[RMDB]
RNA sequence: GGGAACGACUCGAGUAGAGUCGAAAACCCUGGUUAUUCGUAACCAGGGGUUGAGUGAAUCCUCUCAGUGCAUCGGUGGAUCACACGAAACGGAUGGACGACAAUUACGGUUAUUCGUAACCGUAAAGAUGAGGGUUAGGUUCGCCUAACCCUCAUCAAAAGAAACAACAACAACAAC
Reactivity to 2A3 in 0.01 (KOAc 150mM, MgCl2 10mM, bicine 150mM(pH8.5), 24C), signal-to-noise 2, nucleotides 027 to 126: c010c000c000u010g000g020u020u000a020u000u060c280g000u020a020a000c000c000a010g010g000g000g010u080u150g040a040g020u060g050a050a070u000c000c020u040c040u020c070a050g050u050g130c020a050u070c050g160g040u050g070g020a050u080c030a020c020a030c160g090a040a050a020c060g010g060a000u020g040g090a010c030g020a030c050a090a080u050u010a010c000g000g020u020u020a010u060u060c150g020u020a000a000c020c000g010u000a020a030a030
Reactivity to DMS in 0.01 (KOAc 150mM, MgCl2 10mM, bicine 150mM(pH8.5), 24C), signal-to-noise 3, nucleotides 027 to 126: c000c000c000u010g020g000u000u000a000u000u020c180g020u000a000a000c000c000a010g020g010g000g000u010u020g010a090g020u000g000a120a110u010c010c000u000c030u010c040a170g030u000g010c170a040u000c040g000g020u000g010g000a090u000c120a080c060a080c130g010a080a090a040c140g010g010a050u010g010g010a040c030g010a090c180a100a130u000u000a000c000g010g000u000u000a080u010u000c200g000u000a000a010c000c000g000u000a000a010a100
The record gives the reactivity of an RNA of 177 nucleotides to 2A3 and DMS. Reactivities are given for positions 27 through 126. The data come from the RNA Mapping Database (RMDB), library M2PK50. DMS adducts were read by reverse transcription with MarathonRT. Conditions: 150 mM KOAc, 10 mM MgCl2 and 150 mM bicine (pH 8.5), 24 C.